Structure probing data (2A3) for a 207-nucleotide construct. 2A3 adducts were read by reverse transcription with SuperScript II with manganese. The RNA was probed in 150 mM KOAc, 10 mM MgCl2 and 150 mM bicine (pH 8.5) at 24 C. Source: RMDB library OK3TST, as collected in RNAgym.

[RMDB]
RNA sequence: GGGAACGACUCGAGUAGAGUCGAAAACUGCAUACCGCGAAGCUGACGGGCAUCGUCGUGCGUCGCGCCGGUAGUUCCGUCAUCGAGUCGACCGACAAGGCGACCGGGGCCUAUCUGGCGUCGGUGCUGGUGCCGAUUCAGGCGCGAACGGUGGAACCAUUCACGGAAGUUUCGACUUCCGUGAAUGAAAAGAAACAACAACAACAAC
Reactivity to 2A3 in 0.01 (KOAc 150mM, MgCl2 10mM, bicine 150mM(pH8.5), 24C), signal-to-noise 2, nucleotides 027 to 156: c030u050g010c010a080u130a100c020c000g000c030g070a050a010g150c030u020g000a020c010g040g140g000c050a080u060c010g220u010c080g110u150g000c000g020u020c010g000c000g010c000c020g000g000u000a000g020u080u150c030c060g080u050c040a130u130c040g030a050g100u000c000g020a300c020c010g040a120c060a080a110g010g000c000g010a010c000c000g000g000g000g000c000c020u070a080u170c100u160g010g000c020g100u210c120g040g010u020g000c020u050g010g020u000g010c000c000g000a030u070u010c020a020g110g000c040g000c010g140a080a020c050g060g010u010g020g010a020a020c030